Notes
The record gives the reactivity of an RNA of 207 nucleotides to DMS and 2A3. For DMS, 3,519 sequencing reads were counted. For 2A3 the reverse transcriptase was SuperScript II with manganese. For 2A3, 4,386 sequencing reads were counted. The data come from the RNA Mapping Database (RMDB), library ARCHII.
RNA sequence: GGGAACGACUCGAGUAGAGUCGAAAAAGAGACCACCGAUUUUAAGCGUCGUAGCAAAUAUAUAAGCGCAGAGAACACUCAGCGCGACUACGCCCUCGCUGCCUAAUUUGCAGCGACCUGCGUGUCUGUCAGCCUAGAUUCGUCUCUGGUUUAGUGUCCUUGUAUUAGAGUUCGCUCUAAUACAAGGAAAAGAAACAACAACAACAAC
Reactivity to DMS in 0.01 (KOAc 150mM, MgCl2 10mM, bicine 150mM(pH8.5), 24C), signal-to-noise 2, nucleotides 027 to 156: a030g040a080g020a080c040c020a300c060c030g030a160u020u000u010u000a030a130g020c060g020u000c050g010u000a080g000c060a060a080a120u000a150u010a100u000a070a140g000c020g040c050a050g010a080g000a050a110c100a080c040u010c010a120g030c000g000c030g000a050c040u000a030c010g000c010c130c000u000c010g020c010u000g020c010c120u010a070a090u000u010u000g010c000a040g020c020g000a010c040c000u000g000c010g020u000g020u000c070u000g020u000c030a200g020c050c010u000a050g000a120u010u000c090g030u000c020u000c000u020g000g000u000u010u010a050g010u000g000u000
Reactivity to 2A3 in 0.01 (KOAc 150mM, MgCl2 10mM, bicine 150mM(pH8.5), 24C), signal-to-noise 6, nucleotides 027 to 156: a000g090a010g020a010c010c010a020c040c030g050a070u050u090u120u260a160a030g040c040g020u030c030g020u080a030g070c080a050a180a020u140a020u050a020u030a130a060g010c110g000c080a010g010a000g010a100a010c050a020c090u030c050a020g000c020g010c000g110a010c010u120a010c010g000c010c000c010u000c000g000c000u000g000c000c000u210a300a280u130u150u260g000c000a010g000c000g000a000c010c020u050g000c010g010u020g030u060c070u100g050u040c040a020g010c000c000u060a070g000a100u090u070c050g020u000c020u000c010u010g030g040u010u040u050a100g010u110g030u030